[RMDB]
RNA sequence: GGGAACGACUCGAGUAGAGUCGAAAAGAACACCUCCUCAAGCGCCGCGUGCACUUCAGCAGCAGGUCGCUUAGAGUACACGCGCACGCGACAGAGCGUACCGAUAACAAGCUCCGCACGCGAAUACAAUGCCGUAUGAGUUCGCUCAUACGGCAUUAAAAGAAACAACAACAACAAC
Reactivity to DMS in 0.01 (KOAc 150mM, MgCl2 10mM, bicine 150mM(pH8.5), 24C), signal-to-noise 3, nucleotides 027 to 126: g010a060a150c100a080c060c010u020c130c040u030c000a150a080g000c020g000c300c000g000c000g030u000g010c040a010c170u050u000c300a080g120c060a130g020c090a130g000g010u020c030g030c000u000u000a150g030a040g030u020a070c060a030c020g000c020g000c150a150c110g010c000g000a140c170a120g000a030g000c040g000u020a100c110c000g000a120u030a100a110c170a060a130g000c000u000c020c060g000c020a020c030g000c060g000a080a060u020a060c140
Reactivity to 2A3 in 0.01 (KOAc 150mM, MgCl2 10mM, bicine 150mM(pH8.5), 24C), signal-to-noise 3, nucleotides 027 to 126: g070a040a020c020a060c030c000u040c000c000u020c030a030a010g010c010g000c030c000g020c030g080u050g000c010a030c090u140u170c060a030g010c000a000g030c000a030g010g130u170c060g000c000u000u020a050g010a000g030u050a030c060a000c000g000c000g020c010a040c110g030c000g020a040c040a040g060a000g000c000g040u060a120c020c030g050a070u070a180a090c080a060a050g000c000u030c020c030g020c030a030c000g030c030g020a030a030u150a090c090
An RNA of 177 nucleotides, treated with DMS and 2A3 and read out base by base. Reactivities are given for positions 27 through 126. For DMS, 2,908 sequencing reads were counted. It was measured as part of the RMDB library OK1LIB. The reactions ran in a buffer of 150 mM KOAc, 10 mM MgCl2 and 150 mM bicine (pH 8.5), at 24 C.